Overview: An RNA of 177 nucleotides, treated with DMS and 2A3 and read out base by base. 2A3 adducts were read by reverse transcription with SuperScript II with manganese. Values cover nucleotides 27 to 126. The data come from the RNA Mapping Database (RMDB), library OK2TST.

[RMDB]
RNA sequence: GGGAACGACUCGAGUAGAGUCGAAAACGCCGGAUCGCAGCAUAGACGAGCAGGCGCAGGAGGUUAUCGACCUGUUGGAGUCAUCGUCUUAGGCCGGCCUGGUUGCUCUGCUGUCCCUGGCAAGCGGUCCUAUCGAGAUGUUCGCAUCUCGAUAGGAAAAAGAAACAACAACAACAAC
Reactivity to DMS in 0.01 (KOAc 150mM, MgCl2 10mM, bicine 150mM(pH8.5), 24C), signal-to-noise 2, nucleotides 027 to 126: c190g000c050c050g000g010a040u010c100g010c080a160g010c050a080u000a070g010a070c000g010a040g010c090a060g010g010c050g000c010a040g010g010a150g010g000u000u010a110u010c180g000a070c020c010u010g020u020u000g020g000a210g020u000c060a140u010c130g010u000c010u010u010a110g030g010c010c010g010g010c000c030u000g000g000u000u010g000c010u000c030u000g000c030u000g010u000c050c020c020u020g020g000c020a080a060g000c030g000g010
Reactivity to 2A3 in 0.01 (KOAc 150mM, MgCl2 10mM, bicine 150mM(pH8.5), 24C), signal-to-noise 2, nucleotides 027 to 126: c050g000c010c000g000g030a080u100c060g000c070a050g030c030a110u020a130g040a110c020g000a010g110c080a080g010g040c020g000c020a000g040g040a010g060g010u210u170a140u300c120g030a060c030c030u120g300u120u140g130g040a120g060u040c030a080u090c030g140u000c000u030u070a090g050g000c050c020g070g110c060c000u090g040g020u060u050g000c000u040c060u020g000c000u000g030u030c020c000c020u000g000g020c000a000a060g050c010g000g050
The RNA was probed in 150 mM KOAc, 10 mM MgCl2 and 150 mM bicine (pH 8.5) at 24 C.